Chemical mapping of a 177-nucleotide RNA with 2A3 and DMS. For DMS, 5,801 sequencing reads were counted. The reactions ran in a buffer of 150 mM KOAc, 10 mM MgCl2 and 150 mM bicine (pH 8.5), at 24 C. Source: RMDB library OK2TRN, as collected in RNAgym.
RNA sequence: GGGAACGACUCGAGUAGAGUCGAAAAACUGUUUACCCAGUACGCGGACCAGAUGGAACUCCGCUUCCAACUGAUGCUUCUGGAGCUGUUAUCGGGCCUGAUGGAGAACCAAUUCCUACUGACCCUACAUAGUAGGCUUGUUCGCAAGCCUACUAUGAAAAGAAACAACAACAACAAC
Reactivity to 2A3 in 0.01 (KOAc 150mM, MgCl2 10mM, bicine 150mM(pH8.5), 24C), signal-to-noise 2, nucleotides 027 to 126: a010c050u060g020u160u180u180a140c010c010c000a010g030u040a010c120g020c030g010g050a080c010c040a010g020a080u050g010g010a000a010c020u070c190c040g060c000u000u010c000c010a040a030c020u010g020a050u090g010c020u070u000c020u030g030g000a040g000c040u070g060u170u070a110u160c040g000g000g020c020c010u060g000a060u120g040g020a070g040a090a040c010c000a080a140u090u000c010c000u020a080c030u080g110a130c020c010c000u010a040
Reactivity to DMS in 0.01 (KOAc 150mM, MgCl2 10mM, bicine 150mM(pH8.5), 24C), signal-to-noise 6, nucleotides 027 to 126: a070c070u010g010u000u010u010a200c120c040c010a050g030u010a070c180g020c050g010g000a090c140c010a050g010a180u000g030g000a050a040c050u010c170c170g010c140u000u010c020c010a020a080c060u000g000a110u010g010c050u000u000c030u000g000g000a110g000c040u000g000u000u000a090u010c110g010g000g000c030c020u010g000a130u000g000g000a060g010a080a110c160c110a060a160u000u010c010c010u000a160c110u010g010a080c010c010c020u000a160